[RMDB]
RNA sequence: GGGAACGACUCGAGUAGAGUCGAAAACUCGCGUGGAUUGGGCGCACGCGGAAUGUCAUCCUGGAUGUCGGGCAGGACGAUGCCGUCCUUCUUGAUCUCCGUCUCGAUGUAGCGGAUCUUGCGCUCCGACGUCCAGCGACUUCGGUCGCUGGACGUCAAAAGAAACAACAACAACAAC
Reactivity to 2A3 in 0.01 (KOAc 150mM, MgCl2 10mM, bicine 150mM(pH8.5), 24C), signal-to-noise 2, nucleotides 027 to 126: c050u050c040g010c020g100u060g020g080a280u070u180g020g000g000c000g040c000a000c040g040c050g000g040a050a030u280g010u080c060a010u050c010c040u010g000g000a040u060g020u000c000g030g020g000c050a020g010g000a000c000g170a090u230g230c130c030g000u000c040c010u000u040c010u000u050g040a040u000c000u000c040c010g140u080c010u000c030g220a300u150g000u300a000g010c060g000g050a020u020c040u000u190g040c060g030c140u030c020c000